[RMDB]
RNA sequence: GGGAACGACUCGAGUAGAGUCGAAAAGAUAUGGAUCUACCUAGGGAGCGAGGAAAUGUAGUUAUUAAUGGUCGGAAACGACCAUUAAUAACUACAUUUCUCGCGAGGAUCUAGAGAUCCUAAGUCAUCAUAAAUUUUACUUCGGUAAAAUUUAUGAAAAAGAAACAACAACAACAAC
Reactivity to DMS in 0.01 (KOAc 150mM, MgCl2 10mM, bicine 150mM(pH8.5), 24C), signal-to-noise 3, nucleotides 027 to 126: g010a060u000a300u010g000g000a000u000c000u010a130c300c010u000a000g000g010g000a050g030c010g000a040g010g000a010a000a010u000g000u000a010g010u000u000a000u000u000a000a010u000g000g010u000c000g020g000a140a100a220c020g010a010c000c000a000u000u000a000a000u000a000a000c000u000a000c000a000u000u010u000c000u000c000g020c000g000a030g020g000a030u000c000u000a000g000a040g010a020u000c000c000u010a070a110g000u010c040a170